This 177-nucleotide RNA was probed chemically with DMS. Reactivities are rounded to 0.1 and cut off at 0 and 3. Conditions: 150 mM KOAc, 10 mM MgCl2 and 150 mM bicine (pH 8.5), 24 C. High DMS reactivity at an A or C suggests that its Watson-Crick edge is free.
RNA sequence: GGGAACGACUCGAGUAGAGUCGAAAAAGAUAUGGAGUCUCCGUAACGCUGAUGACCAUACAGGGAACAUGGUCGGAAACGACCAUGGGAACUGUAUGCAAGGCGGAAGGAGACUCCUAAGUCAGAACCCAAUCACUGUGUUCGCACAGUGAUUGGGAAAAGAAACAACAACAACAAC
Reactivity to DMS in 0.01 (KOAc 150mM, MgCl2 10mM, bicine 150mM(pH8.5), 24C), signal-to-noise 2, nucleotides 027 to 126: a080g020a030u030a300u030g000g000a000g010u000c130u020c020c000g000u000a080a300c040g060c050u000g010a050u020g010a210c300c000a020u000a020c020a000g030g000g010a300a300c000a000u000g000g010u000c000g020g000a050a020a070c000g000a020c000c000a010u000g000g000g010a140a110c010u000g010u000a000u000g000c030a020a060g010g000c020g040g000a070a210g010g000a020g000a000c030u020c000c000u000a000a030g010u010c000a180g000a150a250